An RNA of 177 nucleotides, treated with DMS and 2A3 and read out base by base. The reactions ran in a buffer of 150 mM KOAc, 10 mM MgCl2 and 150 mM bicine (pH 8.5), at 24 C. The data come from the RNA Mapping Database (RMDB), library RFMREP. For 2A3, 1,326 sequencing reads were counted. For DMS the reverse transcriptase was MarathonRT. 2A3 is a SHAPE reagent: it acylates the 2'-hydroxyl of flexible nucleotides of all four kinds.
[RMDB]
RNA sequence: GGGAACGACUCGAGUAGAGUCGAAAAAGGGUGUACUUCGGAUUUCCGAGCCUAUAUUGGUUUUGAAAGGACCUUUAAGUCCCUACUAUACUACAUUGUACUAGCGUAGGCCACGUAGGCCCGUAAGCAGCUAAACAUUCUUCGGAAUGUUUAGCUGAAAAGAAACAACAACAACAAC
Reactivity to DMS in 0.01 (KOAc 150mM, MgCl2 10mM, bicine 150mM(pH8.5), 24C), signal-to-noise 3, nucleotides 027 to 126: a070g000g010g030u000g020u000a030c040u000u010c150g010g000a230u000u010u010c030c020g000a020g020c010c010u000a090u010a110u030u010g000g020u000u000u000u000g000a050a090a090g010g000a020c000c060u010u000u010a140a200g000u000c010c000c010u000a030c020u000a140u010a020c080u000a020c080a150u010u010g020u000a050c190u010a030g030c080g020u000a030g010g000c000c010a070c300g020u000a040g000g000c000c000c020g020u010a040a110g000
Reactivity to 2A3 in 0.01 (KOAc 150mM, MgCl2 10mM, bicine 150mM(pH8.5), 24C), signal-to-noise 1, nucleotides 027 to 126: a010g040g010g010u100g050u120a070c030u040u080c080g080g050a100u050u070u060c010c010g010a020g000c000c000u090a090u010a070u130u200g020g010u030u000u040u040g050a060a030a040g020g030a010c000c000u000u100u090a070a010g020u000c000c010c000u000a040c020u020a020u020a040c070u010a020c020a150u100u170g040u040a040c060u040a010g010c010g080u000a000g010g010c000c000a090c070g050u050a030g040g000c000c010c010g020u010a000a130g050